[RMDB]
RNA sequence: GGGAACGACUCGAGUAGAGUCGAAAACUCAGAUAUAGAACGCUUGUUUGAGAUGGAGAACCUGGUCCACGACAUCAUAAGAAAAAUUCAAACAACAGUUUAUAAACACGGUGAGGACUACGUGUUCCCUCCCAGGUCCCUUCGGGGACCUGGGAGGAAAAGAAACAACAACAACAAC
Reactivity to 2A3 in 0.01 (KOAc 150mM, MgCl2 10mM, bicine 150mM(pH8.5), 24C), signal-to-noise 1, nucleotides 027 to 126: c000u000c130a000g150a010u290a000u030a030g190a140a030c030g030c140u000u000g050u000u000u000g100a060g000a010u030g070g030a160g000a150a000c040c010u000g010g000u000c000c000a010c000g100a140c000a000u040c000a030u030a280a000g230a080a120a000a040a120u190u000c000a000a030a050c000a050a000c010a010g000u000u010u000a280u150a110a040a000c040a000c030g060g030u050g000a290g060g000a000c050u100a010c040g000u030g000u040u060c000